RNA sequence: GGGAACGACUCGAGUAGAGUCGAAAACUCGUCUGGUUCGCCAGACGAGAAAGAAAAUCCGACCGAAGGGAAGGGCACAAACGCUCGGAGUGCCCAAACCCAAAACGUGGGGGUUCGCCCCCACGAACGCUAUUGUGAAGUUCGCUUCACAAUAGCGAAAAGAAACAACAACAACAAC
Reactivity to 2A3 in 0.01 (KOAc 150mM, MgCl2 10mM, bicine 150mM(pH8.5), 24C), signal-to-noise 2, nucleotides 027 to 126: c000u000c000g000u030c000u020g000g110u050u070c210g010c080c000a010g010a000c020g010a000g010a000a010a000g010a000a090a000a030u050c000c030g070a120c040c060g110a170a100g020g000g010a020a070g030g010g000c040a020c030a030a300a000c140g100c120u170c170g110g020a040g000u000g010c000c040c000a050a100a060c000c000c000a000a050a010a010c030g000u010g000g000g010g000g040u000u000c140g110c000c000c000c000c000a000c000g000a000a010
Reactivity to DMS in 0.01 (KOAc 150mM, MgCl2 10mM, bicine 150mM(pH8.5), 24C), signal-to-noise 1, nucleotides 027 to 126: c000u000c000g040u010c000u000g000g040u000u020c240g020c000c010a000g000a000c020g000a010g000a000a040a100g000a130a060a090a090u010c030c000g000a010c050c110g010a070a170g000g000g000a160a300g000g010g000c030a000c010a020a070a150c120g000c230u000c170g020g030a140g020u000g010c000c000c010a000a010a130c050c000c020a060a120a090a090c020g030u000g000g030g020g020g000u000u000c150g000c030c000c000c000c000a000c000g000a040a030
This 177-nucleotide RNA was probed chemically with 2A3 and DMS. DMS (dimethyl sulfate) methylates the pairing face of unpaired adenines and cytosines. The data come from the RNA Mapping Database (RMDB), library M2PK50. The reactions ran in a buffer of 150 mM KOAc, 10 mM MgCl2 and 150 mM bicine (pH 8.5), at 24 C. The 2A3 profile rests on 1,845 reads.